This 177-nucleotide RNA was probed chemically with 2A3 and DMS. The RNA was probed in 150 mM KOAc, 10 mM MgCl2 and 150 mM bicine (pH 8.5) at 24 C.

[RMDB]
RNA sequence: GGGAACGACUCGAGUAGAGUCGAAAAACGAGGCAUACGUGCCUCGAACAGCAGUUCCGGGCCCCUCUGACGCGAGUGCCGGAUACCCGUGAUGUCGGAACUGCAACAGCUGCGCUACGGCGCAGCACCAAGUGCACAUGUUCGCAUGUGCACUUGGAAAAGAAACAACAACAACAAC
Reactivity to 2A3 in 0.01 (KOAc 150mM, MgCl2 10mM, bicine 150mM(pH8.5), 24C), signal-to-noise 5, nucleotides 027 to 126: a000c000g000a000g000g010c000a010u020a090c280g110u040g000c000c000u000c000g000a020a020c010a020g000c000a000g000u000u000c000c000g000g040g050c000c010c000c000u060c020u080g050a050c040g030c050g050a050g030u070g060c070c070g090g030a050u100a060c000c000c000g050u110g040a090u150g130u140c010g000g010a000a000c000u010g000c000a000a010c040a010g000c000u010g000c010g000c000u030a040c260g070g000c000g000c000a010g000c000a000
Reactivity to DMS in 0.01 (KOAc 150mM, MgCl2 10mM, bicine 150mM(pH8.5), 24C), signal-to-noise 2, nucleotides 027 to 126: a060c020g010a040g010g010c030a040u010a060c200g070u000g000c010c000u000c030g010a070a070c150a130g030c000a000g000u000u000c000c000g020g000g000c020c030c030c090u010c020u000g000a070c180g000c080g000a070g020u010g030c040c070g010g010a170u040a020c050c010c000g030u010g010a100u010g000u020c000g050g000a020a000c000u030g010c000a150a020c190a090g010c000u000g020c000g000c000u010a170c110g000g020c020g030c000a000g010c010a030
It was measured as part of the RMDB libraries RFM100 and RFMREP. High 2A3 reactivity points to a flexible backbone, as in loops and unpaired stretches.